The data come from the RNA Mapping Database (RMDB), library M2PK50. The record gives the reactivity of an RNA of 177 nucleotides to DMS and 2A3. The RNA was probed in 150 mM KOAc, 10 mM MgCl2 and 150 mM bicine (pH 8.5) at 24 C. The 2A3 profile rests on 3,280 reads. DMS adducts were read by reverse transcription with MarathonRT.

RNA sequence: GGGAACGACUCGAGUAGAGUCGAAAAUUGUCAUGUUUCGACAUGACAAACAUAAGAACUAGACAAAAACGGCCAAAAAGUCUAGAUCAAAUAAAGGCCGAAGACUAGGUUAGUUCGCUAACCUAAACUCAGACUUAUGUUUCGACAUAAGUCUGAGAAAAGAAACAACAACAACAAC
Reactivity to DMS in 0.01 (KOAc 150mM, MgCl2 10mM, bicine 150mM(pH8.5), 24C), signal-to-noise 2, nucleotides 027 to 126: u000u000g000u000c000a020u000g000u010u000u030c230g030a050c000a000u010g010a030c000a000a030a100c120a120u000a090a140g000a110a120c000u010a020g000a010c000a050a050a030a060a160c010g020g030c030c000a050a060a110a150a110g000u030c010u000a000g010a100u010c090a080a070a080u020a050a090a100g040g020c000c000g020a060a100g030a090c250u000a000g010g000u000u000a000g000u000u000c300g000c000u000a010a010c000c000u000a000a060a140
Reactivity to 2A3 in 0.01 (KOAc 150mM, MgCl2 10mM, bicine 150mM(pH8.5), 24C), signal-to-noise 3, nucleotides 027 to 126: u020u020g000u000c000a000u000g000u000u060u080c160g070a000c000a000u000g010a000c000a000a050a000c020a040u180a030a060g050a050a030c020u020a010g010a010c010a010a130a040a060a030c020g000g000c000c030a040a090a050a100a010g010u000c020u010a030g040a200u140c020a000a060a040u130a050a050a010g010g000c020c000g030a070a010g100a050c090u010a000g000g010u010u010a000g000u020u050c190g000c080u000a010a000c000c000u010a050a030a010